[RMDB]
RNA sequence: GGGAACGACUCGAGUAGAGUCGAAAACUAAGUCCUAAAUAUCCUUAGAUGUCAUUUGGAAAAAUAUUGAUUAAUAGCAGUAGUUCUCAAUCCUGAUUGUAUACCAGAAUCACCCUAGGGUUUGGACUAAUUAAAUCAGAAUCUCUUGGGUUUAAGACGUAAUUACUCACUUCGGUGAGUAAUUACGAAAAGAAACAACAACAACAAC
Reactivity to 2A3 in 0.01 (KOAc 150mM, MgCl2 10mM, bicine 150mM(pH8.5), 24C), signal-to-noise 1, nucleotides 027 to 156: c030u040a120a000g060u010c010c000u080a050a100a120u150a090u070c000c000u060u050a040g030a080u090g060u040c030a110u070u050u150g030g000a060a060a050a090a060u180a050u030u030g010a000u060u210a060a150u090a070g000c040a010g010u070a010g000u080u080c080u010c010a000a050u040c000c030u080g000a030u100u030g080u020a120u050a130c000c050a100g090a220a050u100c000a030c010c040c000u000a000g000g020g000u010u090u070g060g000a000c030u050a030a080u190u090a020a030a070u040c040a030g080a150a100u010c010u010c000u020u000g070g010g000u040u090u140a030a030g030a010